Chemical mapping of a 177-nucleotide RNA with DMS and 2A3. DMS adducts were read by reverse transcription with MarathonRT. In probing experiments dimethyl sulfate is read out at A N1 and C N3, which are open when not base-paired. Values are in units of 0.01, from 0 to 300, in steps of 10.
RNA sequence: GGGAACGACUCGAGUAGAGUCGAAAAAACCUAUUGAGCAUGGUUGUCUACCCUCUGGUAUUUUGUUCCAUGGUGUUGGGUAUCGCUUCUAUUAGUGAUAUGAAGAAGCUGGGGCGCAUAGGAAUGAGGUAUAUAUUCGUUUCGACGAAUAUAUACCAAAAGAAACAACAACAACAAC
Reactivity to DMS in 0.01 (KOAc 150mM, MgCl2 10mM, bicine 150mM(pH8.5), 24C), signal-to-noise 7, nucleotides 027 to 126: a060a050c010c000u000a130u000u000g010a080g010c060a060u000g000g010u000u000g010u000c070u010a100c020c010c040u000c070u000g000g010u010a040u000u000u010u000g010u010u000c020c010a080u000g010g010u000g010u010u000g010g000g020u000a030u010c070g000c010u000u000c220u010a130u000u000a040g030u010g000a090u000a030u000g010a100a100g010a050a040g020c030u010g020g000g000g010c050g020c060a050u000a070g000g010a090a090u000g000a160
Reactivity to 2A3 in 0.01 (KOAc 150mM, MgCl2 10mM, bicine 150mM(pH8.5), 24C), signal-to-noise 3, nucleotides 027 to 126: a000a000c080c000u100a110u040u120g050a010g010c040a040u040g000g040u050u090g060u050c040u050a070c000c010c000u030c010u030g000g040u080a170u050u250u080u140g100u110u040c020c010a040u070g040g000u100g040u120u090g040g020g010u020a020u040c010g010c010u040u030c030u090a200u160u070a060g010u010g070a030u010a020u130g110a060a060g020a030a020g000c010u030g000g050g050g000c030g000c020a010u090a050g000g060a070a070u100g030a060